Chemical mapping of a 177-nucleotide RNA with DMS and 2A3. Values are in units of 0.01, from 0 to 300, in steps of 10. The RNA was probed in 150 mM KOAc, 10 mM MgCl2 and 150 mM bicine (pH 8.5) at 24 C. 2A3 adducts were read by reverse transcription with SuperScript II with manganese. DMS adducts were read by reverse transcription with MarathonRT. Values cover nucleotides 27 to 126.
RNA sequence: GGGAACGACUCGAGUAGAGUCGAAAAUGGGAGGCGACCGAUUGAAGCCAAUUGCAGACAUCAUGUGUGACUGAGUAUUGGUGUAGGCGAUAGCCUAAAAUCACCCGCCAGCAGAUAAUAUCUGCUGCCCAUUAAGUAUGUUCGCAUACUUAAUGGGAAAAGAAACAACAACAACAAC
Reactivity to DMS in 0.01 (KOAc 150mM, MgCl2 10mM, bicine 150mM(pH8.5), 24C), signal-to-noise 9, nucleotides 027 to 126: u000g000g010g020a080g010g020c010g020a080c130c050g000a070u010u000g010a120a300g010c010c010a020a020u000u040g010c000a020g010a120c020a030u000c050a110u010g010u010g040u000g000a100c020u010g000a070g010u000a030u000u000g000g000u000g010u000a220g010g000c000g010a060u010a180g010c000c000u000a020a040a060a070u010c120a140c020c010c040g020c300c010a010g010c000a010g000a020u000a030a030u000a300u010c000u000g000c000u000g000
Reactivity to 2A3 in 0.01 (KOAc 150mM, MgCl2 10mM, bicine 150mM(pH8.5), 24C), signal-to-noise 9, nucleotides 027 to 126: u060g010g020g020a010g020g000c020g030a050c020c010g240a300u030u110g060a050a010g010c010c000a000a010u020u050g040c000a000g020a030c000a030u080c080a160u220g170u070g020u020g100a040c010u010g020a030g140u070a050u020u020g020g010u290g010u150a020g020g020c010g030a040u060a020g010c000c010u030a070a030a000a050u060c020a040c010c010c010g030c030c020a010g000c000a010g010a020u060a140a050u070a240u050c000u000g000c000u010g010